RNA sequence: GGGAACGACUCGAGUAGAGUCGAAAAAACAUUGUGGUUACAGGGCAAGCUAGCCAAGACCUACAAAAGUGAUUGGCUUUCCAGAUGAAAAAGGACAGCUGUUUUGACAUUCUUGUACAAAGAUACCUCGCAGUGGUACAUUCGUGUACCACUGCGAAAAAGAAACAACAACAACAAC
Reactivity to DMS in 0.01 (KOAc 150mM, MgCl2 10mM, bicine 150mM(pH8.5), 24C), signal-to-noise 1, nucleotides 027 to 126: a060a040c100a050u010u010g000u000g000g000u000u000a110c100a070g060g000g000c020a070a050g010c130u060a070g020c000c010a080a020g000a260c300c090u000a050c270a070a060a110a070g080u000g000a150u000u000g000g050c010u000u000u000c040c070a020g000a080u000g000a050a050a020a080a100g040g000a020c130a070g030c120u000g020u000u010u000u070g000a070c080a200u010u000c000u000u000g030u000a090c080a030a010a070g010a010u000a080c040c000
Chemical mapping of a 177-nucleotide RNA with DMS. The RNA was probed in 150 mM KOAc, 10 mM MgCl2 and 150 mM bicine (pH 8.5) at 24 C. For DMS, 551 sequencing reads were counted. The data come from the RNA Mapping Database (RMDB), library OK2TRN.